[RMDB]
Conditions: 150 mM KOAc, 10 mM MgCl2 and 150 mM bicine (pH 8.5), 24 C. Structure probing data (2A3 and DMS) for a 177-nucleotide construct. For 2A3, 12,966 sequencing reads were counted. Reactivities are given for positions 27 through 126.

RNA sequence: GGGAACGACUCGAGUAGAGUCGAAAACGUCGUGAACUAGCGACAAUGCAUUAGGUCCAUCGUUAUCUAACCGAAACAUCGUGACUAGUGGUAGAAUAGAACCAAGAGAGGCCGCUGGCAAACAAAGACGGAGGCUAUUAUUCGUAGUAGCCUCCGUAAAAGAAACAACAACAACAAC
Reactivity to 2A3 in 0.01 (KOAc 150mM, MgCl2 10mM, bicine 150mM(pH8.5), 24C), signal-to-noise 8, nucleotides 027 to 126: c060g000u010c020g020u040g090a100a080c080u040a090g010c000g040a030c020a040a050u100g030c030a040u040u140a080g000g050u020c030c010a050u040c060g020u020u060a090u050c070u060a040a070c030c030g040a060a060a050c060a080u140c070g100u070g080a100c040u040a050g040u010g050g030u030a020g050a110a070u110a090g040a040a020c030c020a100a010g050a010g020a030g100g000c000c010g000c030u020g020g000c020a050a070a030c040a040a140a010g080
Reactivity to DMS in 0.01 (KOAc 150mM, MgCl2 10mM, bicine 150mM(pH8.5), 24C), signal-to-noise 7, nucleotides 027 to 126: c130g010u000c050g020u000g010a140a110c090u020a110g010c030g000a040c040a100a110u030g010c050a060u010u010a070g000g000u010c020c020a060u020c070g010u000u020a070u010c070u010a060a080c090c060g000a120a070a070c110a080u020c100g010u010g000a080c040u000a060g010u010g010g010u010a070g010a070a080u020a070g000a080a090c060c030a070a050g000a120g010a120g010g000c010c010g010c060u000g000g000c060a050a090a050c100a060a110a080g000
Notes
Reactivities are rounded to 0.1 and cut off at 0 and 3. For 2A3 the reverse transcriptase was SuperScript II with manganese. It was measured as part of the RMDB library OK1LIB.